[RMDB]
RNA sequence: GGGAACGACUCGAGUAGAGUCGAAAAUCCUAAGUCAGACGGGAGCUGGGGAGUCUACAACAGCAUCAUCGGAAACGAUGAUGACAUGUAGAUGAAAGACAGCGUUGAUCGUCUGAUAUGGAAAACAAAAAACGAAUCUUCGGAUUCGUUUUUUGAACGAGCUUAAUAGGUUCGCCUAUUAAGCUCGAAAAGAAACAACAACAACAAC
Reactivity to 2A3 in 0.01 (KOAc 150mM, MgCl2 10mM, bicine 150mM(pH8.5), 24C), signal-to-noise 2, nucleotides 027 to 156: u050c010c000u030a090a020g030u000c000a000g000a000c000g000g000g040a020g000c000u010g010g010g080g010a100g030u000c000u000a010c000a160a010c010a040g010c010a000u000c000a000u000c000g010g030a100a030a080c010g000a000u020g000a000u000g060a080c000a030u030g000u000a020g000a020u020g080a090a080a010g160a060c000a000g000c020g040u060u020g000a000u000c010g000u010c010u010g000a000u000a020u010g020g050a020a080a070a110c040a000a010a000a000a000a000c010g000a040a020u010c020u060u170c300g050g000a000u000u000c000g000u010u000u000u000u000u000g000a040a010
Reactivity to DMS in 0.01 (KOAc 150mM, MgCl2 10mM, bicine 150mM(pH8.5), 24C), signal-to-noise 1, nucleotides 027 to 156: u000c000c020u000a060a300g020u000c000a000g000a010c000g010g000g180a080g030c000u010g000g030g000g010a300g030u000c000u000a010c000a010a020c050a200g000c030a040u000c000a000u000c020g000g000a260a080a210c010g010a020u000g000a000u000g010a060c110a300u000g000u000a000g040a040u000g010a200a090a160g010a170c000a040g010c000g010u000u000g010a070u000c000g040u000c000u000g000a030u000a060u000g030g000a090a110a160a300c030a010a020a020a000a000a020c000g000a030a040u000c020u000u000c300g080g000a030u010u000c000g020u000u000u000u000u000u000g000a060a080
The record gives the reactivity of an RNA of 207 nucleotides to 2A3 and DMS. Source: RMDB library RNAMAK, as collected in RNAgym. The reactions ran in a buffer of 150 mM KOAc, 10 mM MgCl2 and 150 mM bicine (pH 8.5), at 24 C. DMS adducts were read by reverse transcription with MarathonRT.